[RMDB]
RNA sequence: GGGAACGACUCGAGUAGAGUCGAAAAGGGUUUAGCAGCGAGACGACGAUACGUACCCUUUUUUUUAAGUCGUCGAGAGGUACGAGUUUUGCUGAUUUUUUUCAGCUUUUAUUGCUGCUUUACCCAAGGGUGGUUCGUUCUUCGGGGUGGACCACCCAAAAGAAACAACAACAACAAC
Reactivity to 2A3 in 0.01 (KOAc 150mM, MgCl2 10mM, bicine 150mM(pH8.5), 24C), signal-to-noise 9, nucleotides 027 to 126: g000g000g000u010u010u010a010g000c010a000g000c010g020a020g010a050c090g010a010c030g040a070u080a160c010g040u010a010c000c000c000u010u010u000u000u000u000u020u140a130a060g040u060c060g060u060c090g020a020g010a050g030g010u010a010c020g020a070g060u040u070u140u100g030c000u010g040a080u080u040u030u040u040u080u040c000a000g000c000u030u070u040u090a080u030u040g000c000u000g000c000u010u000u010a000c000c000c010a010a030
Reactivity to DMS in 0.01 (KOAc 150mM, MgCl2 10mM, bicine 150mM(pH8.5), 24C), signal-to-noise 8, nucleotides 027 to 126: g010g010g000u000u000u000a000g020c020a010g010c010g010a040g000a140c230g000a030c060g000a130u050a110c040g010u000a010c020c000c010u000u000u010u020u030u030u050u030a050a070g010u020c080g010u010c070g000a050g010a110g000g010u000a010c020g010a190g010u010u010u010u010g010c010u000g000a000u010u000u010u030u020u010u000c000a000g000c000u010u010u020u020a110u010u010g000c000u000g000c000u000u000u000a010c000c000c000a080a070

Source: RMDB library OK1LIB, as collected in RNAgym. This 177-nucleotide RNA was probed chemically with 2A3 and DMS. 2A3 is a SHAPE reagent: it acylates the 2'-hydroxyl of flexible nucleotides of all four kinds. The 2A3 profile rests on 48,458 reads. 2A3 adducts were read by reverse transcription with SuperScript II with manganese. The DMS profile rests on 43,177 reads.